Chemical mapping of a 177-nucleotide RNA with DMS and 2A3. It was measured as part of the RMDB library RFM100. The reactions ran in a buffer of 150 mM KOAc, 10 mM MgCl2 and 150 mM bicine (pH 8.5), at 24 C. The DMS profile rests on 1,918 reads.

RNA sequence: GGGAACGACUCGAGUAGAGUCGAAAACUUUAUAGUACCUAUUCCAGUCCGAUUGCGACAUUAAAUUUAACUAUAUUUCUGCAUUUAAGAUGCUAUAAUAAAUUAUGGCAUCUUGUGGAAAGAUAGUAUUUAAUACCAGCUUCGGCUGGUAUUAAAUAAAAGAAACAACAACAACAAC
Reactivity to DMS in 0.01 (KOAc 150mM, MgCl2 10mM, bicine 150mM(pH8.5), 24C), signal-to-noise 1, nucleotides 027 to 126: c040u010u030u020a120u010a100g010u000a210c040c050u000a130u020u010c060c030a080g000u030c000c040g010a180u030u040g000c090g010a060c060a080u010u020a060a080a060u030u030u020a120a060c010u000a000u000a030u000u000u020c000u000g000c000a040u020u050u050a040a040g010a020u000g000c000u000a000u000a000a050u020a060a150a210u020u000a040u010g000g010c000a000u000c000u000u000g040u000g010g000a020a030a010g000a020u000a010g010u000
Reactivity to 2A3 in 0.01 (KOAc 150mM, MgCl2 10mM, bicine 150mM(pH8.5), 24C), signal-to-noise 4, nucleotides 027 to 126: c020u120u180u100a200u080a120g030u080a110c000c020u040a100u060u100c050c040a030g040u000c030c000g210a170u070u300g040c080g010a030c040a070u120u160a070a080a060u110u120u120a030a010c000u000a000u000a010u050u000u000c010u000g000c010a040u040u160u100a070a020g000a000u000g000c010u000a010u020a010a070u120a050a050a150u110u000a000u010g000g000c000a000u000c000u010u030g000u000g000g000a000a000a000g010a000u000a000g000u010